[RMDB]
RNA sequence: GGGAACGACUCGAGUAGAGUCGAAAAACGAGUGGAUAGUAUACGUACUAUCCACUCGAAGCUUUCGACAUGGUUCUGAACAAUACGCAUUGCAUAUGUUGUUGAGAUCAUUAGUUGAAAGCCGAAAGCGUCAAACUAAAUUCGUUUAGUUUGACGCAAAAGAAACAACAACAACAAC
Reactivity to 2A3 in 0.01 (KOAc 150mM, MgCl2 10mM, bicine 150mM(pH8.5), 24C), signal-to-noise 9, nucleotides 027 to 126: a000c010g000a000g000u000g000g000a000u000a000g040u010a020u020a050c290g030u010a010c040u000a000u000c000c000a000c000u000c000g000a000a000g000c010u000u000u000c000g000a010c010a010u030g060g010u180u170c000u030g070a010a000c000a010a030u080a060c080g030c140a240u140u300g020c040a060u110a050u300g030u020u000g010u000u040g170a010g000a000u000c000a010u050u090a040g010u000u000g000a000a000a000g000c000c010g150a110a080a000
Reactivity to DMS in 0.01 (KOAc 150mM, MgCl2 10mM, bicine 150mM(pH8.5), 24C), signal-to-noise 3, nucleotides 027 to 126: a110c020g000a010g030u000g000g000a000u000a000g020u000a030u010a110c190g030u000a000c000u010a000u000c000c000a000c000u000c020g020a030a060g000c010u000u010u010c010g010a010c000a030u000g000g000u010u000c000u000g000a020a030c000a010a010u010a090c260g020c040a190u030u040g020c060a110u020a120u020g010u000u000g010u000u000g000a020g000a030u000c000a000u010u030a070g020u000u000g000a030a010a010g010c010c060g000a080a070a110